[RMDB]
RNA sequence: GGGAACGACUCGAGUAGAGUCGAAAAGCGCGCAUUGUUUGAGGUGCGCAAGCCGACCGUCGGGCUGCUGAAUGUCGGUACGGAAGAGGUCAAGGGCCUCGACGAAAUCAAGGAAGCAGGCCAGAUAGCCUAUUUAGGGAUUCGUCCCUAAAUAGGCAAAAGAAACAACAACAACAAC
Reactivity to 2A3 in 0.01 (KOAc 150mM, MgCl2 10mM, bicine 150mM(pH8.5), 24C), signal-to-noise 5, nucleotides 027 to 126: g050c040g000c000g020c020a020u020u070g220u300u230u300g210a090g050g010u010g000c000g000c000a000a030g020c000c010g050a060c010c000g070u070c070g010g000g040c020u020g010c000u020g050a090a040u070g070u150c070g000g000u030a060c050g050g010a090a050g000a040g000g010u030c100a140a240g170g120g000c010c000u020c020g000a010c010g040a040a060a050u080c040a050a040g040g000a000a010g020c010a000g020g100c010c010a040g030a120u150a040
Reactivity to DMS in 0.01 (KOAc 150mM, MgCl2 10mM, bicine 150mM(pH8.5), 24C), signal-to-noise 5, nucleotides 027 to 126: g040c130g010c000g010c000a030u000u000g010u020u010u010g010a140g020g010u010g010c000g010c010a070a090g040c000c020g010a100c020c150g000u000c040g010g000g000c020u000g010c010u000g010a270a130u000g010u010c060g020g000u000a140c040g010g000a100a100g000a040g010g030u000c040a140a170g020g020g030c000c000u000c020g010a210c050g000a070a090a060u000c110a090a050g000g010a210a060g010c010a030g010g000c010c050a150g010a080u010a090